RNA sequence: GGGAACGACUCGAGUAGAGUCGAAAAACGACUUACGAGUCGAAUCCGAUAGGUGAGGUCAUCCAAGGUAAGUGGUGCCAAAGGCACCCGCCUCACCGCCCGCAAGGGUAGAACAGGGAGGAGGUAACCUAACUCCCUCGUUCGCGAGGGAGUUAGGAAAAGAAACAACAACAACAAC
Reactivity to 2A3 in 0.01 (KOAc 150mM, MgCl2 10mM, bicine 150mM(pH8.5), 24C), signal-to-noise 1, nucleotides 027 to 126: a000c020g000a010c010u030u040a000c000g000a000g000u000c000g000a000a000u040c000c000g030a140u130a080g000g000u000g010a000g000g010u010c000a060u050c200c110a180a110g000g020u000a000a000g010u020g140g000u000g000c010c010a170a040a140g020g000c000a000c020c000c000g010c000c000u000c000a000c000c000g000c000c010c000g010c030a070a070g040g000g000u030a030g080a190a030c100a150g000g000g060a000g010g000a000g000g060u040a010a020
Reactivity to DMS in 0.01 (KOAc 150mM, MgCl2 10mM, bicine 150mM(pH8.5), 24C), signal-to-noise 2, nucleotides 027 to 126: a140c010g000a020c000u040u000a070c020g000a020g000u000c000g010a050a100u000c000c010g000a190u070a090g000g000u000g020a030g000g030u000c000a100u040c160c280a130a300g020g000u000a000a000g020u000g000g000u000g030c010c030a080a150a100g000g050c000a000c000c000c000g000c020c000u000c020a000c000c000g010c000c010c010g000c300a100a070g020g010g000u000a030g000a140a150c050a090g000g000g010a020g000g000a080g000g000u000a090a170
Description
Structure probing data (2A3 and DMS) for a 177-nucleotide construct. High DMS reactivity at an A or C suggests that its Watson-Crick edge is free. 2A3 adducts were read by reverse transcription with SuperScript II with manganese. The DMS profile rests on 3,513 reads. It was measured as part of the RMDB library RFM100.